[RMDB]
RNA sequence: GGGAACGACUCGAGUAGAGUCGAAAACCCUCUCACGUCCAGCCCCUCCCCGUGUCUAGUGAAGGGAGACUCCGGGACUCCUUGCAUGCUGGGGACGAAGCCGCCCCCGGGCGCUCCCCUCUGUCCAAACCACUAUGGUUCGCCAUAGUGAAAAGAAACAACAACAACAAC
Reactivity to 2A3 in 0.01 (KOAc 150mM, MgCl2 10mM, bicine 150mM(pH8.5), 24C), signal-to-noise 9, nucleotides 027 to 129: c000c000c000u020c010u020c010a090c040g060u020c020c010a020g010c000c000c010c000u010c000c000c000c000g060u060g070u050c060u060a080g050u050g170a070a040g020g020g010a010g010a040c020u010c030c020g000g010g030a040c010u030c010c010u050u070g070c050a080u120g020c020u050g010g010g020g010a010c040g060a060a020g030c030c020g040c010c010c000c000c010g010g010g000c060g010c010u020c000c000c000c000u000c010u020g060u000c020c030a050a030a060c030
Reactivity to DMS in 0.01 (KOAc 150mM, MgCl2 10mM, bicine 150mM(pH8.5), 24C), signal-to-noise 9, nucleotides 027 to 129: c020c000c000u010c030u000c070a120c100g000u020c020c030a060g000c050c000c010c020u010c020c000c010c000g020u010g010u010c020u020a090g030u020g010a110a070g000g010g030a040g000a060c030u000c040c040g010g000g010a110c040u030c020c010u000u000g010c070a060u030g030c040u020g010g000g010g000a050c060g010a090a080g020c060c050g020c060c040c000c010c030g020g000g020c060g000c010u000c020c010c020c040u010c010u030g010u000c050c050a070a110a110c170